This 207-nucleotide RNA was probed chemically with 2A3.
RNA sequence: GGGAACGACUCGAGUAGAGUCGAAAAGUGCCUCGUCGGCGCGGCAUGCCAACCUGAUCCGAAGUUCAAGGUGGUUUCUCUGGCCUUCCAGAGAGAUGCGCGUCGGAAGAACCGACGAACAAACCUUAAAACAAAACGACGUUCGCGUCGUUUUGAACCACGGUAAAGUGUUCGCACUUUACCGUGGAAAAGAAACAACAACAACAAC
Reactivity to 2A3 in 0.01 (KOAc 150mM, MgCl2 10mM, bicine 150mM(pH8.5), 24C), signal-to-noise 2, nucleotides 027 to 156: g070u070g050c000c000u030c040g040u000c020g010g010c010g020c030g040g010c030a040u080g000c000c000a070a110c070c020u040g040a050u030c080c100g240a170a050g060u050u060c060a070a010g000g000u020g000g000u040u100u000c010u020c030u010g010g040c070c070u300u300c020c010a000g000a010g000a000g000a020u050g080c050g000c000g030u060c010g000g000a030a030g010a100a020c070c010g020a000c030g030a120a050c080a070a070a090c000c020u210u270a020a160a050a060c010a000a000a000a000c010g020a000c010g010u020u080c210g020c010g040u000c000g000u000u000u010u000g010a020a010